Structure probing data (DMS and 2A3) for a 207-nucleotide construct. The RNA was probed in 150 mM KOAc, 10 mM MgCl2 and 150 mM bicine (pH 8.5) at 24 C. For DMS, 2,199 sequencing reads were counted. The 2A3 profile rests on 1,306 reads.
RNA sequence: GGGAACGACUCGAGUAGAGUCGAAAAGACGUGGAGGUUCCGCGCCCUCCUUUGCGCGUAAGUACGUCGAAAUUCGGUGCUUCGGAUCGCACCGUUUGAUCCAUUUGAUAUCCGCUUGGUGCCGCGGUUGGGCAUUUACACUUACCCGAAAGGGGAAGGAUACUGCAGGAUUCGUCCUGCAGUAUCCAAAAGAAACAACAACAACAAC
Reactivity to DMS in 0.01 (KOAc 150mM, MgCl2 10mM, bicine 150mM(pH8.5), 24C), signal-to-noise 1, nucleotides 027 to 156: g000a060c000g020u000g000g000a030g000g020u020u000c020c070g000c070g020c170c040c040u000c100c010u000u000u000g070c010g020c060g000u010a060a140g000u010a040c040g000u000c010g010a070a050a070u000u010c060g000g000u000g040c000u020u000c070g040g000a130u000c220g020c020a040c010c000g020u000u000u000g000a190u010c060c130a180u000u000u010g020a200u000a090u000c000c010g030c090u000u020g030g030u000g030c080c060g030c040g040g000u000u000g020g010g080c010a180u010u000u000a100c080a080c060u000u000a160c000c000c000g000a070a070a270g000g000g020g000a060a120
Reactivity to 2A3 in 0.01 (KOAc 150mM, MgCl2 10mM, bicine 150mM(pH8.5), 24C), signal-to-noise 2, nucleotides 027 to 156: g030a000c000g000u050g030g110a040g040g090u140u060c030c000g000c000g010c000c010c000u190c000c050u060u020u090g050c030g020c010g050u020a050a040g060u040a050c010g000u010c020g030a040a040a020u030u030c010g000g000u000g000c000u120u160c050g060g060a060u040c050g020c020a000c000c000g000u000u030u050g030a030u020c020c060a090u060u020u180g080a060u020a040u060c010c020g030c060u030u150g040g000u020g000c000c020g070c040g050g020u030u080g060g010g020c020a000u080u070u060a040c110a000c010u040u140a060c000c000c000g020a030a000a030g020g020g000g010a010a020